This 177-nucleotide RNA was probed chemically with DMS and 2A3.
Conditions: 150 mM KOAc, 10 mM MgCl2 and 150 mM bicine (pH 8.5), 24 C.
2A3 adducts were read by reverse transcription with SuperScript II with manganese.
For DMS the reverse transcriptase was MarathonRT.
[RMDB]
RNA sequence: GGGAACGACUCGAGUAGAGUCGAAAAGAUAUGGAACGAGGGCGCCUAGCUACGAAGAACGUUAAGCGUCGCUGGUCGGAAACGACCAAAAGUCGCUUAACGGGAGUAGGGUCCUCGUUCCUAAGUCGAAUGAAGACAUCUUCGGAUGUCUUCAUUCAAAAGAAACAACAACAACAAC
Reactivity to DMS in 0.01 (KOAc 150mM, MgCl2 10mM, bicine 150mM(pH8.5), 24C), signal-to-noise 2, nucleotides 027 to 126: g020a050u020a300u000g000g000a020a000c000g030a000g010g000g000c050g030c070c050u010a060g040c060u010a100c190g010a120a140g000a130a300c000g020u000u000a010a010g000c020g010u000c000g010c300u000g000g000u010c000g010g000a090a070a160c000g000a010c020c010a030a020a130a230g010u000c000g010c010u000u000a000a000c000g000g020g010a060g030u000a040g020g040g030u000c010c010u000c010g030u000u000c000c000u020a060a110g020u000c070
Reactivity to 2A3 in 0.01 (KOAc 150mM, MgCl2 10mM, bicine 150mM(pH8.5), 24C), signal-to-noise 2, nucleotides 027 to 126: g050a030u120a050u280g010g000a000a000c010g030a000g050g010g020c190g300c120c070u140a180g180c050u100a180c120g300a300a160g090a300a000c010g030u020u000a000a010g010c000g000u020c020g000c140u000g000g000u040c020g000g000a050a090a150c000g020a030c020c020a050a070a000a030g000u010c000g010c000u010u000a000a000c000g010g000g000a030g020u000a000g040g010g010u050c010c000u000c000g000u000u010c000c000u000a010a000g020u010c020